RNA sequence: GGGAACGACUCGAGUAGAGUCGAAAAUCGCUAAGCUUCGGCUUAGCGAAAAGUCGCGGCUUGAGGGCGUGUACGGCUGCGCACACACACGACCCUCAAGCGAAAGCAUCGUGUUCGCACGAUGCAAGACCACGUUACUGUUCGCAGUAACGUGGUCAAAAGAAACAACAACAACAAC
Reactivity to DMS in 0.01 (KOAc 150mM, MgCl2 10mM, bicine 150mM(pH8.5), 24C), signal-to-noise 2, nucleotides 027 to 126: u000c000g010c000u000a010a000g000c000u000u010c190g050g010c000u000u010a000g030c000g020a000a000a070a110g010u000c060g000c150g030g000c010u000u000g010a020g000g000g010c000g020u000g050u000a090c190g000g050c050u000g010c100g000c050a070c070a070c130a010c000a050c000g000a110c010c010c000u000c010a020a000g010c010g010a030a040a120g000c010a000u000c000g030u000g000u010u020c150g010c010a010c000g000a000u000g000c000a050a050
Reactivity to 2A3 in 0.01 (KOAc 150mM, MgCl2 10mM, bicine 150mM(pH8.5), 24C), signal-to-noise 4, nucleotides 027 to 126: u010c000g000c010u010a000a010g010c010u020u160c240g080g000c000u030u010a000g030c000g000a020a030a000a000g050u020c040g010c050g290g000c010u000u010g000a010g000g010g000c000g010u000g010u010a030c070g040g000c060u180g100c150g060c030a040c000a000c000a000c000a000c080g300a300c000c000c010u010c000a000a010g000c010g000a000a000a010g000c000a010u000c000g010u010g040u030u080c220g000c040a010c000g000a000u010g000c010a000a010